Conditions: 150 mM KOAc, 10 mM MgCl2 and 150 mM bicine (pH 8.5), 24 C. This 177-nucleotide RNA was probed chemically with DMS and 2A3. It was measured as part of the RMDB library OK1LIB. For 2A3 the reverse transcriptase was SuperScript II with manganese. DMS adducts were read by reverse transcription with MarathonRT.

RNA sequence: GGGAACGACUCGAGUAGAGUCGAAAAGUGCUUGAGCACUGUCGUUGAUGCGAUCCGGAAAGCAUUUGCGACGAGAGUUCGCUCUCUUGAUGUCGAUCCGGAAAGACAUCUGUGCUCUUGCACGAAAGGGACUGCCGUGCUUCGGCAUGGUAGUCCCAAAAGAAACAACAACAACAAC
Reactivity to DMS in 0.01 (KOAc 150mM, MgCl2 10mM, bicine 150mM(pH8.5), 24C), signal-to-noise 5, nucleotides 027 to 126: g020u000g010c000u000u000g000a020g010c000a010c020u010g040u020c130g010u030u020g010a020u000g020c030g000a300u000c000c010g000g000a030a130a290g000c010a010u000u010u030g030c150g000a100c110g020a030g000a040g020u010u050c190g020c030u000c020u000c040u020u010g000a000u010g010u040c010g030a230u000c010c020g010g000a020a200a140g010a190c000a010u000c000u010g020u000g000c000u000c000u010u000g000c000a000c010g010a040a070a080
Reactivity to 2A3 in 0.01 (KOAc 150mM, MgCl2 10mM, bicine 150mM(pH8.5), 24C), signal-to-noise 9, nucleotides 027 to 126: g000u000g000c000u010u010g000a000g000c000a010c020u050g140u180c200g070u090u200g010a020u010g010c030g070a160u020c010c000g020g020a060a040a010g010c010a010u030u050u220g100c110g040a050c080g000a020g000a000g030u090u160c210g030c090u010c000u000c010u020u110g020a010u010g080u220c010g010a040u020c010c010g000g040a030a030a000g030a020c000a010u000c050u040g000u000g000c000u000c000u000u000g000c000a000c000g000a050a000a010